RNA sequence: GGGAACGACUCGAGUAGAGUCGAAAAAACCAGGUCAUGUUUGUACGUGAUUUGGGCCGACAUCCCCGCCGAAAUAGUCCUGCGAAGAUCUAAGGUCGCUUCUGGAUGGAUUUGCCACCGGGUGCACGUACGUAUAAACGUUCGCGUUUAUACGUACAAAAGAAACAACAACAACAAC
Reactivity to DMS in 0.01 (KOAc 150mM, MgCl2 10mM, bicine 150mM(pH8.5), 24C), signal-to-noise 4, nucleotides 027 to 126: a060a090c010c010a020g000g000u010c000a000u000g010u010u000u010g010u020a050c010g050u010g000a020u000u000u000g010g000g000c050c040g010a110c180a120u000c010c010c010c050g010c060c030g010a060a060a080u000a090g000u000c020c000u000g020c080g010a060a060g000a080u010c060u000a100a120g000g010u000c070g010c050u000u000c040u000g020g000a070u000g000g000a200u000u000u020g020c050c030a080c050c050g000g020g010u000g010c080a080c180
Reactivity to 2A3 in 0.01 (KOAc 150mM, MgCl2 10mM, bicine 150mM(pH8.5), 24C), signal-to-noise 4, nucleotides 027 to 126: a010a000c010c000a000g000g020u010c010a000u020g070u090u180u220g200u300a020c020g000u010g000a000u000u000u020g010g020g010c050c000g060a030c030a090u050c000c010c000c010g010c010c020g060a070a060a040u100a060g030u030c020c020u050g020c040g050a060a010g020a060u020c030u120a070a040g060g010u030c030g010c030u060u040c030u040g100g020a120u060g040g000a050u100u050u160g100c000c010a020c000c010g040g020g000u040g010c010a020c110